This 177-nucleotide RNA was probed chemically with 2A3 and DMS. Conditions: 150 mM KOAc, 10 mM MgCl2 and 150 mM bicine (pH 8.5), 24 C. For 2A3 the reverse transcriptase was SuperScript II with manganese. The DMS profile rests on 6,231 reads. The data come from the RNA Mapping Database (RMDB), library TTRDES.

RNA sequence: GGGAACGACUCGAGUAGAGUCGAAAAGAUAUGGAAAGUAGCCUCGAUAAGAUUAUAUCGGAAACGAUAUGAAUCUUUUGACGAGGACUACUUUCCUAAGUCAAACGUCAGACUUCGGUCUGACGAAGAUUCUGUAUGAGUUCGCUCAUACAGAAUCAAAAGAAACAACAACAACAAC
Reactivity to 2A3 in 0.01 (KOAc 150mM, MgCl2 10mM, bicine 150mM(pH8.5), 24C), signal-to-noise 4, nucleotides 027 to 126: g010a010u050a030u080g000g010a010a000a000g010u000a000g010c000c000u020c050g100a150u060a300a030g000a010u000u010a010u020a010u020c010g030g000a050a030a030c030g000a000u020a000u060g300a060a070u030c000u030u070u090u170g290a190c070g000a000g000g020a000c000u000a000c000u000u000u000c000c000u000a000a000g020u000c030a140a030a100c010g000u010c010a010g000a010c010u040u170c300g140g000u000c000u000g010a000c010g000a000a010
Reactivity to DMS in 0.01 (KOAc 150mM, MgCl2 10mM, bicine 150mM(pH8.5), 24C), signal-to-noise 5, nucleotides 027 to 126: g010a030u000a300u000g000g000a030a010a020g010u000a000g010c000c000u000c000g030a140u010a010a010g000a010u000u000a030u000a000u010c000g000g010a120a070a220c000g000a010u000a000u000g010a010a020u000c000u010u000u000u000g010a200c140g000a020g010g020a110c000u000a000c000u000u000u000c000c000u000a000a050g000u000c040a120a130a300c020g000u000c000a000g000a020c000u000u010c240g030g000u000c000u010g010a000c010g000a070a060